[RMDB]
RNA sequence: GGGAACGACUCGAGUAGAGUCGAAAAGAGGGCGAAAGUGGGUAUAAGUGAGGUGCUAGACCCCCAAAAAGUCCCCUCUAAAGGGACACAUCUAAGGACUAUUAUAGUCUAUGAUGAACGACACCAAUCCCAUUGUUUAGUUCGCUAAACAAUGGGAAAAAGAAACAACAACAACAAC
Reactivity to DMS in 0.01 (KOAc 150mM, MgCl2 10mM, bicine 150mM(pH8.5), 24C), signal-to-noise 1, nucleotides 027 to 126: g010a060g010g000g010c150g050a090a040a120g030u000g000g010g010u000a080u000a020a020g050u000g000a080g000g000u000g010c040u010a080g040a110c050c040c010c040c030a060a000a070a180a120g050u000c020c000c000c010u000c150u000a010a110a120g000g000g000a050c050a270c000a020u000c000u010a100a180g000g000a010c000u000a100u000u000a210u000a000g010u000c000u010a300u000g000a000u010g000a070a130c050g040a030c140a080c140c070a010a100